[RMDB]
RNA sequence: GGGAACGACUCGAGUAGAGUCGAAAAGCCGGGUUAGUUGCCACCUUGUUGCCGAUAAGGAAGAACGUGGCCUUGGCGUCGUUGUCCUUCAGGAUUUGCACAAGCCGGUCCGUGUACGGUCCCGGACCCCGUAUACGUAUUUCGAUACGUAUACGGGAAAAGAAACAACAACAACAAC
Reactivity to DMS in 0.01 (KOAc 150mM, MgCl2 10mM, bicine 150mM(pH8.5), 24C), signal-to-noise 5, nucleotides 027 to 126: g010c010c010g000g000g010u020u010a080g000u000u010g000c050c050a110c140c040u000u000g010u030u000g020c020c030g000a090u020a070a100g020g020a090a060g020a050a040c090g000u000g000g010c010c040u010u010g020g020c020g010u010c040g010u010u020g010u000c010c020u000u010c100a130g000g000a040u000u010u020g010c030a040c080a070a090g010c110c030g000g000u020c040c040g010u010g010u030a060c080g010g000u010c040c000c000g000g010a130c200
Reactivity to 2A3 in 0.01 (KOAc 150mM, MgCl2 10mM, bicine 150mM(pH8.5), 24C), signal-to-noise 6, nucleotides 027 to 126: g050c000c020g010g000g030u080u150a130g020u080u120g060c020c000a050c020c000u030u100g100u110u100g070c030c030g050a100u070a120a070g080g010a040a050g030a060a020c040g040u090g030g010c010c010u050u200g040g000c020g030u040c030g030u030u130g040u020c020c000u040u020c030a050g030g050a080u040u040u180g020c030a030c000a110a040g010c010c010g020g010u010c020c020g050u060g060u100a080c090g020g010u030c020c000c000g000g080a100c020

An RNA of 177 nucleotides, treated with DMS and 2A3 and read out base by base. For DMS the reverse transcriptase was MarathonRT. High 2A3 reactivity points to a flexible backbone, as in loops and unpaired stretches. Values cover nucleotides 27 to 126.